[RMDB]
Record summary: Chemical mapping of a 207-nucleotide RNA with 2A3. The RNA was probed in 150 mM KOAc, 10 mM MgCl2 and 150 mM bicine (pH 8.5) at 24 C. Reactivities are rounded to 0.1 and cut off at 0 and 3.
RNA sequence: GGGAACGACUCGAGUAGAGUCGAAAAACGGUCGUACGCGACCGAGGCGCGGCUAGGUCGACGGACCGAACAAUGGCAUCCUGCAUUCUGCCAUCCGCCGCGCAGCUUCUUCUCAAACGGUGCGGAAAAAAGUAGGACACCUUCGGGUGUCCUACAACCUCGCGUAAUAGUUCGCUAUUACGCGAGGAAAAGAAACAACAACAACAAC
Reactivity to 2A3 in 0.01 (KOAc 150mM, MgCl2 10mM, bicine 150mM(pH8.5), 24C), signal-to-noise 1, nucleotides 027 to 156: a000c020g000g000u000c000g000u030a050c240g000c020g170a000c000c000g010a050g030g000c000g000c000g000g010c000u000a000g000g000u010c030g100a180c170g210g010a000c010c000g000a010a000c010a030a040u000g000g020c000a030u100c020c020u020g020c010a030u270u040c030u090g000c000c000a000u000c020c010g000c000c000g010c000g010c000a000g000c010u110u050c020u070u050c020u030c040a060a050a060c070g070g020u020g000c020g070g000a010a030a000a000a010a070g010u000a000g000g000a000c000a000c010c050u000u080c150g000g030g000u010g030u000c000c000u000a000c020a000a000